[RMDB]
This 177-nucleotide RNA was probed chemically with DMS and 2A3. For DMS, 910 sequencing reads were counted. DMS adducts were read by reverse transcription with MarathonRT.
RNA sequence: GGGAACGACUCGAGUAGAGUCGAAAACACGCCGAUCGGCCGUUACGGUGGCGCGCUUUCCUCCGUUCGCGCGGAUGAUCUGGGUGCGGUGCCGCUAAAGGCGCUGAUGGAGCGCAAUGGCUCGGUAAUGGCCAGUAGCAUUCGUGCUACUGGCCAUAAAAGAAACAACAACAACAAC
Reactivity to DMS in 0.01 (KOAc 150mM, MgCl2 10mM, bicine 150mM(pH8.5), 24C), signal-to-noise 1, nucleotides 027 to 126: c060a050c190g010c010c000g010a100u020c170g000g020c000c040g000u000u000a060c040g020g040u000g000g000c030g020c060g020c010u000u000u000c000c010u000c000c010g010u000u000c300g020c300g000c000g010g000a010u020g000a090u000c200u000g000g030g010u000g020c000g000g000u000g010c030c020g000c080u000a070a110a140g020g020c020g020c000u000g010a200u000g000g020a030g010c000g000c010a060a050u000g000g010c030u000c030g000g010u000a070
Reactivity to 2A3 in 0.01 (KOAc 150mM, MgCl2 10mM, bicine 150mM(pH8.5), 24C), signal-to-noise 2, nucleotides 027 to 126: c040a020c040g000c000c000g010a100u070c080g060g010c000c000g000u050u050a020c040g000g040u040g050g080c000g000c000g020c030u130u050u040c010c030u040c000c000g010u030u060c090g030c030g020c030g140g030a020u030g020a000u060c170u180g110g010g000u030g000c000g120g300u020g000c000c000g000c050u060a130a050a050g120g000c030g000c050u040g010a190u180g090g170a040g030c030g000c020a000a030u080g030g000c060u030c070g030g000u130a100